[RMDB]
RNA sequence: GGGAACGACUCGAGUAGAGUCGAAAAGCAGCUGCACAAGCAGUCGGACGCCGAGCUGCGGCGGCUGCAGGAGCAGAAGCGCGCGGCCGAGGCUCGCAUCAGCGCCCUGCAGACCCGCCUGGAGGGCACUAUAACUCUGCUUCGGCAGAGUUAUAGUAAAAGAAACAACAACAACAAC
Reactivity to 2A3 in 0.01 (KOAc 150mM, MgCl2 10mM, bicine 150mM(pH8.5), 24C), signal-to-noise 3, nucleotides 027 to 126: g000c020a000g000c010u050g040c060a090c060a300a150g010c010a010g040u050c030g020g090a140c080g070c130c030g070a060g040c050u050g000c030g050g010c000g020g020c010u010g000c000a020g040g050a070g010c070a040g010a120a010g040c050g000c000g010c050g130g000c070c040g080a100g110g060c060u060c080g030c020a080u110c060a030g060c010g010c060c000c000u010g060c000a000g010a110c030c010c020g040c010c000u040g020g080a040g030g000g000c010
Reactivity to DMS in 0.01 (KOAc 150mM, MgCl2 10mM, bicine 150mM(pH8.5), 24C), signal-to-noise 4, nucleotides 027 to 126: g020c030a070g000c010u000g000c060a110c190a120a160g010c010a030g010u000c030g010g020a170c150g020c050c020g010a090g010c040u000g010c190g010g010c000g010g000c010u010g010c020a020g020g000a300g010c020a040g010a050a090g000c020g010c110g010c060g000g020c060c080g010a120g020g010c010u000c010g000c040a070u000c100a070g010c050g000c050c010c010u000g000c000a010g000a090c090c000c020g000c080c020u000g000g000a060g000g000g020c060
An RNA of 177 nucleotides, treated with 2A3 and DMS and read out base by base. Values are in units of 0.01, from 0 to 300, in steps of 10. The data come from the RNA Mapping Database (RMDB), library OK2TRN. The 2A3 profile rests on 3,548 reads. The RNA was probed in 150 mM KOAc, 10 mM MgCl2 and 150 mM bicine (pH 8.5) at 24 C.